Record summary:
This 177-nucleotide RNA was probed chemically with 2A3 and DMS. The DMS profile rests on 8,082 reads. For DMS the reverse transcriptase was MarathonRT.
RNA sequence: GGGAACGACUCGAGUAGAGUCGAAAAAAACAGUGCAUCCUGCACGGCGAACACGUGCCCGCGCAAUGCGUCGUCGACGUCCAUCUGCAUCGCCGAAUCGGCGCACAGCUUGACCACCUGGCCGGCCUACAUUGCCUCAUUUCGAUGAGGCAAUGUAAAAAGAAACAACAACAACAAC
Reactivity to 2A3 in 0.01 (KOAc 150mM, MgCl2 10mM, bicine 150mM(pH8.5), 24C), signal-to-noise 5, nucleotides 027 to 126: a010a000a000c090a020g020u060g000c000a040u080c020c020u040g020c030a010c020g030g020c030g040a060a010c040a000c050g060u070g040c000c010c000g000c000g020c020a040a140u140g020c020g030u020c010g030u030c040g030a030c030g020u060c030c030a060u050c030u110g050c020a050u080c030g000c030c020g050a100a100u130c050g010g010c030g010c020a020c020a050g010c010u050u080g050a040c010c000a040c010c010u020g050g000c000c010g000g020c010c000
Reactivity to DMS in 0.01 (KOAc 150mM, MgCl2 10mM, bicine 150mM(pH8.5), 24C), signal-to-noise 4, nucleotides 027 to 126: a060a040a110c120a040g010u010g040c040a130u010c040c020u010g010c050a050c050g010g030c030g000a060a080c140a090c040g000u010g000c000c020c020g010c070g010c110a050a060u030g020c030g000u000c020g000u030c010g010a080c030g000u000c090c090a080u020c090u000g000c060a050u020c010g010c030c010g010a070a060u040c070g020g020c020g000c060a060c070a110g000c050u010u010g010a100c040c030a040c060c010u000g010g000c020c010g010g000c080c050